RNA sequence: GGGAACGACUCGAGUAGAGUCGAAAAAAGGUGGAUUCGUUGCAGUCCAGCGUCCGCUCGAUGCCCUGCCCGGUGACAUGGGUGUCGCCGUUCUUGGCGUGUGCGGCCGGCGGUGGGGCGGCCAAGGUAUUGCAGAAACAUUCGUGUUUCUGCAAUAAAAAGAAACAACAACAACAAC
Reactivity to DMS in 0.01 (KOAc 150mM, MgCl2 10mM, bicine 150mM(pH8.5), 24C), signal-to-noise 6, nucleotides 027 to 126: a050a070g010g010u000g000g010a060u000u000c060g020u000u010g020c100a100g010u000c040c020a090g000c040g010u000c010c020g010c030u000c040g010a060u010g000c010c010c020u000g010c080c100c010g010g010u000g010a030c020a080u010g010g020g030u010g010u000c010g010c020c010g010u000u000c060u000u000g010g000c020g030u010g010u000g010c040g000g010c060c030g010g010c070g010g010u000g010g010g010g010c040g000g000c040c060a090a100g010g010
Reactivity to 2A3 in 0.01 (KOAc 150mM, MgCl2 10mM, bicine 150mM(pH8.5), 24C), signal-to-noise 3, nucleotides 027 to 126: a000a000g110g010u070g020g010a080u090u080c060g050u180u150g000c070a040g050u030c040c000a010g040c020g040u010c000c000g000c020u020c030g090a030u080g010c000c000c010u010g000c030c010c010g020g020u040g010a030c030a110u180g300g040g140u120g080u010c020g000c000c000g030u050u050c040u040u070g000g000c030g010u050g010u020g060c040g010g000c010c020g070g010c030g030g060u060g010g030g030g000c010g000g020c030c020a030a000g110g020
This 177-nucleotide RNA was probed chemically with DMS and 2A3. 2A3 adducts were read by reverse transcription with SuperScript II with manganese. For DMS, 19,592 sequencing reads were counted. The reactions ran in a buffer of 150 mM KOAc, 10 mM MgCl2 and 150 mM bicine (pH 8.5), at 24 C. DMS adducts were read by reverse transcription with MarathonRT.